[RMDB]
RNA sequence: GGGAACGACUCGAGUAGAGUCGAAAAAGAUCAGUUUACACAAUUCCUGCUUUGAACCAAUUCAGUUUGAUUCCAAAUGACAUAUCUUAGUUCAAAAGAUGUAAAGCCUUUUAGCAUGGGGAGGGGAAUCCUAACUCUUUUUCGAAAGAGUUAGGAUAAAAGAAACAACAACAACAAC
Reactivity to 2A3 in 0.01 (KOAc 150mM, MgCl2 10mM, bicine 150mM(pH8.5), 24C), signal-to-noise 6, nucleotides 027 to 126: a000g070a070u110c050a030g060u040u080u080a070c060a000c020a060a060u070u050c000c000u010g020c020u040u040u050g020a020a020c010c010a090a110u080u130c030a080g130u030u090u080g050a090u160u000c050c020a020a050a140u120g020a040c010a080u130a070u050c040u090u100a050g010u090u070c020a040a070a030a040g030a030u040g010u060a050a050a090g040c010c020u060u110u080u160a040g010c020a040u070g000g000g010g020a030g000g000g010g020a020
Reactivity to DMS in 0.01 (KOAc 150mM, MgCl2 10mM, bicine 150mM(pH8.5), 24C), signal-to-noise 9, nucleotides 027 to 126: a090g010a080u010c090a080g010u000u000u000a060c070a050c070a130a180u000u010c020c010u000g010c100u000u000u000g010a040a040c020c060a030a060u010u000c150a090g010u000u000u000g010a140u010u010c100c050a030a050a070u000g010a080c130a050u000a050u000c100u000u000a080g010u000u000c080a040a040a040a040g010a070u000g010u000a040a050a090g010c060c040u000u010u000u000a090g010c070a030u000g000g000g000g010a070g010g000g000g000a150